[RMDB]
RNA sequence: GGGAACGACUCGAGUAGAGUCGAAAAUGUCGGCAAGCUCUAUAUAUGGACACUUACGAAGGGUUUUGGUUGUUUUGUAUCUCAAGCCGACUUUGAGUAUUUGAGGAAAAUACGACAGAAACAACAAAUAGACCGGUAUCCUUCGGGAUACCGGUAAGCAUAUAUCGAGGUUCGCCUCGAUAUAUGCAAAAGAAACAACAACAACAAC
Reactivity to 2A3 in 0.01 (KOAc 150mM, MgCl2 10mM, bicine 150mM(pH8.5), 24C), signal-to-noise 2, nucleotides 027 to 156: u060g010u020c000g020g000c050a060a040g060c080u010c040u050a110u010a060u030a050u300g080g040a100c060a010c110u220u230a080c100g080a130a060g020g060g000u030u040u090u080g060g000u000u010g010u000u060u020u000g060u060a100u070c030u010c040a020a000g000c000c000g020a000c000u020u090u020g010a000g020u020a010u020u030u000g060a110g030g110a040a010a000a010u040a010c040g040a010c010a030g120a040a050a030c020a020a000c000a000a110a050u110a030g100a030c000c000g000g000u000a000u000c000c000u030u050c110g000g000g010a000u000a000c010c000g000g000u000a000a000
Reactivity to DMS in 0.01 (KOAc 150mM, MgCl2 10mM, bicine 150mM(pH8.5), 24C), signal-to-noise 2, nucleotides 027 to 156: u000g040u000c030g000g080c040a080a190g010c050u010c030u000a130u020a180u010a100u020g020g000a050c040a030c040u000u000a120c090g010a110a080g030g030g000u000u000u000u000g020g010u000u000g000u000u000u000u010g000u010a080u010c010u000c010a080a250g010c030c000g010a020c010u010u000u000g010a290g020u000a020u000u000u000g010a160g040g020a200a050a010a000u010a050c050g040a230c070a090g000a090a040a020c010a050a100c030a040a030a120u010a140g000a020c020c010g000g030u000a010u000c020c000u000u020c300g060g010g010a020u000a000c000c000g000g000u000a000a080